[RMDB]
RNA sequence: GGGAACGACUCGAGUAGAGUCGAAAAAAGCAGCUAUCCUUUAAAGAGUGCGUAACAGCUCACUCACCGAGGUUAUUUGCCUCCAAGAUGGAAGAGGCUAAAGCCAGUUACCGAUACAUUAGACCACGAUACUAUAUUUCUUCGGAAAUAUAGUAUCAAAAGAAACAACAACAACAAC
Reactivity to 2A3 in 0.01 (KOAc 150mM, MgCl2 10mM, bicine 150mM(pH8.5), 24C), signal-to-noise 2, nucleotides 027 to 126: a000a010g020c040a000g000c010u040a050u100c010c000u070u050u060a100a120a020g030a010g010u040g000c010g000u010a110a030c030a080g030c010u010c020a010c000u020c000a030c030c030g030a030g010g000u040u030a130u080u100u080g000c000c000u000c020c000a090a060g070a160u170g070g030a070a040g010a020g050g000c020u030a040a040a000g020c010c000a010g010u040u030a060c040c010g030a030u050a130c050a090u080u160a040g030a060c030c020a030c130
Reactivity to DMS in 0.01 (KOAc 150mM, MgCl2 10mM, bicine 150mM(pH8.5), 24C), signal-to-noise 6, nucleotides 027 to 126: a110a070g010c020a030g020c040u010a080u000c020c010u000u000u000a100a110a120g000a040g030u000g010c110g010u000a090a110c270a180g020c030u010c010a030c030u000c020a090c200c130g000a030g020g010u000u000a100u010u000u000g010c010c010u000c010c070a080a130g010a100u000g000g010a100a110g010a060g000g000c020u010a030a070a080g020c040c030a070g000u000u000a060c070c030g010a070u010a050c080a060u000u000a080g010a170c040c040a090c190